About this RNA: The record gives the reactivity of an RNA of 177 nucleotides to DMS and 2A3. For 2A3 the reverse transcriptase was SuperScript II with manganese. Values are in units of 0.01, from 0 to 300, in steps of 10. The DMS profile rests on 1,479 reads.
[RMDB]
RNA sequence: GGGAACGACUCGAGUAGAGUCGAAAAGGCGUACAUUGUCGUGUAGUGCAGUGUAUUCGCCCUGUCCGUGCGAAAUGAACCGCCAGCAACGCCAGCCGCAAGGAGGUCUAACCUCUAGAAGCGUGAACACCCCUAUAGCCUUCGGGCUAUAGGGGUGAAAAGAAACAACAACAACAAC
Reactivity to DMS in 0.01 (KOAc 150mM, MgCl2 10mM, bicine 150mM(pH8.5), 24C), signal-to-noise 2, nucleotides 027 to 126: g020g020c000g000u000a010c000a020u000u000g020u000c040g040u020g020u010a120g020u010g000c000a010g030u000g000u010a020u020u010c110g000c010c000c010u000g030u010c010c030g040u020g000c090g000a090a060a110u020g020a110a130c110c030g010c050c040a020g010c050a040a070c080g020c030c080a080g010c030c020g010c050a150a200g000g000a010g040g020u000c220u020a050a100c020c010u010c000u000a090g000a120a160g000c060g000u010g010a080a200
Reactivity to 2A3 in 0.01 (KOAc 150mM, MgCl2 10mM, bicine 150mM(pH8.5), 24C), signal-to-noise 2, nucleotides 027 to 126: g020g000c020g000u010a010c020a030u010u020g080u010c110g000u070g220u290a100g070u030g110c000a000g000u000g000u050a130u080u170c000g040c000c000c000u020g090u100c000c040g040u130g080c030g040a180a030a120u190g020a070a050c070c000g000c030c040a010g040c040a040a020c040g010c040c010a080g030c010c000g120c020a010a060g030g010a000g040g000u020c050u090a130a120c020c010u010c000u010a000g010a180a040g050c030g010u060g030a010a000